[RMDB]
RNA sequence: GGGAACGACUCGAGUAGAGUCGAAAAAAGGCCGUCGGCAUCGUGCAGCCGCCAAUCGUCGCCCCGGAAAGAGACGGCGGCAACGGCUUCGUCAUCGAUGAGGGGCACCGCCGCAGGAACCAGGCGAGCUGGUGAGUCGGUUCGCCGACUCACCAGCAAAAGAAACAACAACAACAAC
Reactivity to 2A3 in 0.01 (KOAc 150mM, MgCl2 10mM, bicine 150mM(pH8.5), 24C), signal-to-noise 2, nucleotides 027 to 126: a000a010g180g010c070c010g120u090c030g030g010c000a100u100c060g190u170g000c020a020g070c010c000g130c050c040a040a120u070c040g020u010c040g090c050c000c000c000g130g060a030a090a010g070a000g030a020c060g000g000c030g020g000c000a030a000c040g020g000c000u100u080c030g100u040c000a180u100c080g060a060u240g000a020g020g040g010g060c000a030c030c000g020c000c000g010c010a020g000g010a070a030c010c000a000g010g010c010g000a000
This 177-nucleotide RNA was probed chemically with 2A3. The reactions ran in a buffer of 150 mM KOAc, 10 mM MgCl2 and 150 mM bicine (pH 8.5), at 24 C. The data come from the RNA Mapping Database (RMDB), library OK1LIB. For 2A3, 689 sequencing reads were counted.